[RMDB]
RNA sequence: GGGAACGACUCGAGUAGAGUCGAAAAAGCACGGUUUUUGAGGACGCAUUUUGUCCGUGCGGUAUUGCCCUCCUUUACACUUUCUCGCAUGGUGCGGGAGUGUGGAGAGGAAACAAAAGCUAGUCUCGAUAGGCGGUUAACUUCGGUUAACCGCCAAGACGAUAGUUAAGUUCGCUUAACUAUCGUCAAAAGAAACAACAACAACAAC
Reactivity to 2A3 in 0.01 (KOAc 150mM, MgCl2 10mM, bicine 150mM(pH8.5), 24C), signal-to-noise 5, nucleotides 027 to 156: a000g020c010a010c010g000g010u010u000u000u000u000g070a100g000g030a010c040g020c110a120u010u000u000u000g000u000c000c000g000u000g000c010g010g030u160a160u030u260g060c000c000c010u060c010c010u010u030u040a000c000a000c000u100u130u040c010u010c000g050c040a080u260g280g000u290g130c010g000g010g000a000g000u010g000u010g000g000a030g000a010g000g030a040a040a000c010a000a000a000a000g060c020u080a040g010u000c010u000c010g070a130u120a090g000g000c000g000g000u010u000a010a010c030u090u080c200g030g000u000u010a000a000c040c000g000c000c000a000a000
Reactivity to DMS in 0.01 (KOAc 150mM, MgCl2 10mM, bicine 150mM(pH8.5), 24C), signal-to-noise 1, nucleotides 027 to 156: a120g040c020a030c020g020g020u020u010u000u000u000g020a100g010g000a060c040g030c040a130u000u000u000u000g020u000c000c020g010u000g000c000g020g000u000a050u010u000g000c020c000c010u000c040c010u000u000u000a050c020a030c010u000u000u000c010u020c010g030c020a300u010g040g000u000g030c000g000g030g000a020g020u010g020u000g000g010a050g000a070g000g010a080a040a090c020a040a040a050a040g020c060u010a080g010u000c010u000c060g030a220u020a070g000g140c010g030g050u000u000a020a030c020u000u000c300g070g030u000u010a000a020c000c000g030c000c010a000a070